[RMDB]
RNA sequence: GGGAACGACUCGAGUAGAGUCGAAAAGCUGAGAAAUUCGUUUCUCAGCACUGGAAAUAAAGCCGAAAGGCUAGGCAUUCCUUAUUUGGCGAAAGCCUGGCAUGAGCCUCCACUUCGGUGGAGGCAAAGUGGCUAAACAAUUCGUUGUUUAGCCACUAAAAGAAACAACAACAACAAC
Reactivity to DMS in 0.01 (KOAc 150mM, MgCl2 10mM, bicine 150mM(pH8.5), 24C), signal-to-noise 3, nucleotides 027 to 126: g000c000u000g020a010g000a020a010a050u000u010c200g040u000u000u010c000u010c000a010g020c000a010c080u000g020g000a070a100a110u000a070a110a110g000c020c010g000a110a100a120g020g000c000u000a010g010g000c090a140u000u000c000c000u000u010a130u010u010u000g010g020c100g000a060a070a120g010c010c010u010g020g010c110a090u000g000a230g000c000c000u000c010c000a010c000u000u000c190g040g030u000g010g010a000g010g020c000a000a000
Reactivity to 2A3 in 0.01 (KOAc 150mM, MgCl2 10mM, bicine 150mM(pH8.5), 24C), signal-to-noise 3, nucleotides 027 to 126: g000c010u010g010a000g000a000a040a010u170u110c150g030u030u000u000c000u000c010a000g010c010a030c030u040g030g070a060a080a120u150a090a130a010g050c010c010g090a070a060a010g060g020c000u010a010g000g000c040a040u030u080c010c000u070u130a300u200u210u180g060g020c100g010a030a000a040g020c010c000u010g000g000c010a040u100g070a010g040c000c000u000c000c000a020c020u040u060c180g090g010u000g000g000a000g000g000c000a000a000